RNA sequence: GGGAACGACUCGAGUAGAGUCGAAAACAGGCUGUUUUAGUUUUGCCAAGAUGUUAUUUAUGCUUCCACUAGCUUACUUUAGUGAUUCAAAACUCGGCACCACAGAGGUUAAAGUGAGUGCUUUGAAGCUAUUAACCAGGUUCGCCUGGUUAAUAGCAAAAGAAACAACAACAACAAC
Reactivity to DMS in 0.01 (KOAc 150mM, MgCl2 10mM, bicine 150mM(pH8.5), 24C), signal-to-noise 1, nucleotides 027 to 126: c020a110g020g040c030u000g000u010u000u010u030a130g020u010u000u000u000g010c150c070a080a060g010a140u000g010u010u010a090u010u010u000a040u000g030c060u000u010c030c040a020c090u000a080g000c050u000u000a070c140u010u000u000a000g020u010g000a150u000u000c130a050a060a060a130c150u010c080g010g000c040a020c050c030a030c090a170g010a040g020g010u000u000a050a060a110g050u010g010a040g030u000g010c030u000u020u000g000a060a060
Reactivity to 2A3 in 0.01 (KOAc 150mM, MgCl2 10mM, bicine 150mM(pH8.5), 24C), signal-to-noise 1, nucleotides 027 to 126: c030a020g130g000c030u050g160u050u040u020u110a050g040u120u050u100u100g000c000c010a010a010g050a080u110g050u160u080a060u090u120u100a040u110g050c020u110u010c010c020a020c040u020a000g030c030u040u210a030c000u140u120u060a010g010u050g080a110u000u080c030a000a000a050a180c020u030c050g010g060c010a000c010c010a040c020a050g140a050g210g040u190u200a090a030a000g030u020g010a050g030u040g020c050u000u060u030g030a050a010

An RNA of 177 nucleotides, treated with DMS and 2A3 and read out base by base. The 2A3 profile rests on 499 reads.